Description: Chemical mapping of a 207-nucleotide RNA with 2A3. The 2A3 profile rests on 452 reads. The data come from the RNA Mapping Database (RMDB), library M2RFPK.
[RMDB]
RNA sequence: GGGAACGACUCGAGUAGAGUCGAAAACCCAGUUCCGGGGCCGUUCACUGGAUCCGAAGCCUCUAGAAGGAUAAUAUAGGCACUCCAUACCCUACGCCGACUCAAUACGUCCCCGUCGUACAGAAUGCAAGGGCAUCCCUGUUCGCAGGGAUGCCAACCGAUUGAUAUUCUUCGGAAUAUCAAUCGGAAAAGAAACAACAACAACAAC
Reactivity to 2A3 in 0.01 (KOAc 150mM, MgCl2 10mM, bicine 150mM(pH8.5), 24C), signal-to-noise 1, nucleotides 027 to 156: c000c000c010a010g030u090u130c010c000g030g000g000g020c000c050g040u190u160c090a070c060u070g040g000a100u030c020c000g010a040a020g000c050c000u050c080u070a040g100a290a070g150g070a040u110a110a110u150a100u140a130g060g030c010a020c050u050c030c010a000u020a110c010c010c010u020a010c050g020c020c030g090a040c020u060c110a030a070u120a110c000g050u000c040c020c010c000g000u020c050g030u010a070c000a030g140a160a070u070g190c070a040a080g190g000g000c000a000u000c000c010c000u000g020u020u060c220g020c050a000g000g040g020a000u000g010c000c000a000a000

For 2A3 the reverse transcriptase was SuperScript II with manganese.